[RMDB]
Chemical mapping of a 177-nucleotide RNA with DMS and 2A3.
RNA sequence: GGGAACGACUCGAGUAGAGUCGAAAAGAUAUGGAUUGUUGUAGGGAGAGCAUUCGGAAACGAGAGGCUCAUCGAUCUACACCAAUCCUAAGUCAAACAAGACGCCAAGUUCGCUUGGCGUCUUGAAGAAGAUAUAUUAGUUCGCUAAUAUAUCUUCAAAAGAAACAACAACAACAAC
Reactivity to DMS in 0.01 (KOAc 150mM, MgCl2 10mM, bicine 150mM(pH8.5), 24C), signal-to-noise 4, nucleotides 027 to 126: g000a040u010a300u000g000g010a030u000u000g000u000u000g010u000a010g020g010g000a080g000a010g020c010a080u000u000c000g010g010a090a060a140c020g010a030g010a140g010g010c010u000c010a180u010c130g000a060u010c000u000a010c000a020c030c010a000a000u000c000c000u010a020a060g010u000c020a110a110a300c010a000a000g000a010c010g000c000c000a000a010g010u010u010c290g010c010u010u000g000g000c000g000u000c000u000u000g000a060a100
Reactivity to 2A3 in 0.01 (KOAc 150mM, MgCl2 10mM, bicine 150mM(pH8.5), 24C), signal-to-noise 1, nucleotides 027 to 126: g010a010u050a030u120g000g000a000u000u010g010u010u000g000u000a020g000g220g050a040g010a010g030c020a030u000u090c000g020g040a020a050a040c010g000a020g040a080g140g150c020u010c020a050u210c060g070a100u000c010u010a000c010a010c000c010a010a000u010c000c000u010a060a030g020u010c020a090a020a120c000a000a020g010a000c030g000c020c000a010a000g040u050u210c300g080c160u020u020g000g000c020g000u010c000u010u000g010a000a010
The RNA was probed in 150 mM KOAc, 10 mM MgCl2 and 150 mM bicine (pH 8.5) at 24 C. The 2A3 profile rests on 7,132 reads. It was measured as part of the RMDB library TTRDEL.